Structure probing data (DMS and 2A3) for a 177-nucleotide construct. The reactions ran in a buffer of 150 mM KOAc, 10 mM MgCl2 and 150 mM bicine (pH 8.5), at 24 C. 2A3 adducts were read by reverse transcription with SuperScript II with manganese. It was measured as part of the RMDB libraries RFM100 and RFMREP.

[RMDB]
RNA sequence: GGGAACGACUCGAGUAGAGUCGAAAAAAAGACUGGCCUCACAGGUAGUACGAAAAUGGCUUAAUGCUUCAGUCCUUCGGGCAAUGAAGCCCUUCGAAGCUCGCAAGGCGGACAAGGUUAGUAGCGAAAGCCAUAAAAUAUUCGUAUUUUAUGGCUUAAAAGAAACAACAACAACAAC
Reactivity to DMS in 0.01 (KOAc 150mM, MgCl2 10mM, bicine 150mM(pH8.5), 24C), signal-to-noise 9, nucleotides 027 to 126: a060a040a070g010a070c050u010g010g010c010c010u000c110a090c130a090g000g010u010a040g020u010a080c070g010a050a040a070a060u020g000g010c020u000u010a080a070u020g010c010u000u000c030a070g000u020c020c010u000u030c140g020g010g010c070a140a080u020g010a030a040g000c030c020c030u000u000c040g000a300a150g000c020u000c030g010c200a100a250g000g000c020g000g000a300c300a020a020g000g010u010u010a080g010u010a050g010c050g010a100
Reactivity to 2A3 in 0.01 (KOAc 150mM, MgCl2 10mM, bicine 150mM(pH8.5), 24C), signal-to-noise 9, nucleotides 027 to 126: a000a000a000g100a020c040u040g050g010c010c000u050c020a080c020a040g040g050u070a020g020u040a060c040g070a050a040a030a070u120g050g000c020u060u060a090a010u180g010c000u030u030c020a080g050u130c010c000u070u100c130g030g000g000c030a030a100u120g020a040a010g010c000c000c000u010u020c020g040a030a010g000c000u000c020g080c050a030a020g020g000c000g000g010a010c010a010a020g030g030u110u120a040g050u090a010g090c020g060a070